[RMDB]
RNA sequence: GGGAACGACUCGAGUAGAGUCGAAAAACAACCAGCUAAAGGACAACAAGGUAGCAAAGGUAGUGAGUCUGGUAAAGAUGUACAACCAAUUGGUGACGACAAAGCGAUGAAUCCAGCGAAACAACCAGAAUCGCAGGAGAUUCGUCUCCUGCGAUUCAAAAGAAACAACAACAACAAC
Reactivity to 2A3 in 0.01 (KOAc 150mM, MgCl2 10mM, bicine 150mM(pH8.5), 24C), signal-to-noise 2, nucleotides 027 to 126: a000c120a050a040c030c000a020g000c000u070a130a080a090g180g030a120c050a290a030c040a130a050g190g130u020a010g010c000a140a010a000g040g000u000a010g060u060g060a020g040u020c010u020g000g010u180a150a110a030g130a050u000g000u020a000c020a020a000c060c020a020a010u120u250g100g040u000g030a020c020g050a010c070a040a090a000g070c100g090a040u020g070a000a000u010c000c030a000g000c000g070a000a020a100c050a020a000c030c010a010
Reactivity to DMS in 0.01 (KOAc 150mM, MgCl2 10mM, bicine 150mM(pH8.5), 24C), signal-to-noise 2, nucleotides 027 to 126: a010c210a040a160c010c000a090g000c060u000a020a040a080g000g000a090c180a130a140c070a070a060g000g020u000a100g000c050a110a000a010g010g010u000a000g000u040g000a230g020u020c010u000g000g040u020a130a170a040g000a020u010g070u000a010c110a030a070c090c000a200a160u040u030g000g030u000g000a010c170g000a110c160a040a030a070g000c170g000a120u050g000a080a070u070c000c060a030g000c000g000a130a060a010c230a000a050c060c130a060